[RMDB]
RNA sequence: GGGAACGACUCGAGUAGAGUCGAAAAGCGGUAUCACGGUCAUUCAAAUAUUGAAGUUAUUAGAACAUGUCGAUUUACCAUCUAUGGGUCCAAGAUCUGUCGAUUACUUGCAUCAUUUGAUACAAGCCGUCCAGGGCGGUUUCGACCGCCCUGGACGAAAAGAAACAACAACAACAAC
Reactivity to 2A3 in 0.01 (KOAc 150mM, MgCl2 10mM, bicine 150mM(pH8.5), 24C), signal-to-noise 1, nucleotides 027 to 126: g030c020g030g030u000a010u110c000a000c050g040g000u000c000a000u100u000c000a030a000a000u100a050u150u240g100a000a000g060u040u000a040u140u190a170g080a200a060c040a030u270g010u000c000g010a000u140u200u000a060c090c000a000u050c050u090a230u190g180g000g000u010c000c030a040a000g070a000u000c000u000g010u010c000g050a050u000u010a080c000u040u030g040c030a000u090c000a000u090u000u150g000a000u040a110c030a100a000g010c000